This 177-nucleotide RNA was probed chemically with DMS and 2A3. DMS adducts were read by reverse transcription with MarathonRT. It was measured as part of the RMDB library OK2TST. For DMS, 2,441 sequencing reads were counted.
[RMDB]
RNA sequence: GGGAACGACUCGAGUAGAGUCGAAAAACACAUACGGAGCGGAGGCUAUCGAGUGGCAUCUGGCAAAUCACCUGCGCGGCAUGCGCGACUUCGAACUGUCCAAGGUCGAUCCUCAAAUCGCUGUCGCCCAUCAUGGACAGUUCGCUGUCCAUGAUGGAAAAGAAACAACAACAACAAC
Reactivity to DMS in 0.01 (KOAc 150mM, MgCl2 10mM, bicine 150mM(pH8.5), 24C), signal-to-noise 3, nucleotides 027 to 126: a080c090a090c140a090u000a160c100g000g010a080g000c030g000g000a090g010g000c120u000a060u000c090g000a090g010u000g000g010c080a070u000c050u010g000g030c010a030a070a110u010c090a050c040c040u000g010c020g000c020g000g000c110a040u000g010c060g010c050g000a040c070u000u000c040g020a030a060c050u000g000u010c020c030a040a130g000g000u000c010g000a040u010c070c040u020c120a060a060a100u010c080g020c100u000g000u000c030g010c110
Reactivity to 2A3 in 0.01 (KOAc 150mM, MgCl2 10mM, bicine 150mM(pH8.5), 24C), signal-to-noise 3, nucleotides 027 to 126: a000c030a000c020a060u140a100c060g050g000a020g010c010g030g030a030g040g000c040u050a040u160c050g030a030g030u080g030g000c010a010u020c050u020g040g000c030a040a030a100u130c030a030c030c010u110g000c010g040c020g100g060c110a030u210g000c030g010c030g020a030c010u050u030c050g040a060a030c000u040g070u050c070c040a060a030g050g000u000c020g010a060u090c000c030u080c010a090a110a050u140c030g000c030u050g060u100c010g000c000